[RMDB]
RNA sequence: GGGAACGACUCGAGUAGAGUCGAAAACGAGAGAGAGUGCGUAUGUUAGAGGAAACGUUGCUUCUGCUUUCUCGGAGCUGCAACUGGAGGUAUCCAGUUUCAUGAAACGUGACCAGGAUAUCAUUCAAAAUAGGUCCUGGUUCGCCAGGACCUAUUUAAAAGAAACAACAACAACAAC
Reactivity to DMS in 0.01 (KOAc 150mM, MgCl2 10mM, bicine 150mM(pH8.5), 24C), signal-to-noise 3, nucleotides 027 to 126: c090g000a050g020a020g000a040g010a090g000u010g000c080g010u000a060u000g020u000u010a100g000a210g000g010a060a110a090c080g010u000u010g030c010u020u020c060u000g030c020u000u010u020c000u030c040g000g000a050g050c130u000g010c120a030a020c100u000g000g030a040g000g010u030a060u000c000c000a090g010u020u000u020c010a020u010g000a050a060a090c220g000u000g010a200c210c020a110g020g010a110u000a020u020c070a160u000u030c080a060
Reactivity to 2A3 in 0.01 (KOAc 150mM, MgCl2 10mM, bicine 150mM(pH8.5), 24C), signal-to-noise 4, nucleotides 027 to 126: c020g000a000g000a000g010a000g000a010g030u060g050c040g030u090a080u120g040u040u030a060g100a060g300g300a090a040a000c030g030u050u050g020c000u090u260c000u080g140c020u040u000u000c000u000c000g010g000a040g030c070u100g010c020a060a030c090u040g010g030a030g050g070u120a120u000c000c000a000g030u000u030u030c030a040u120g050a200a030a000c120g050u010g020a000c010c030a120g000g090a050u070a000u070c120a260u120u090c080a050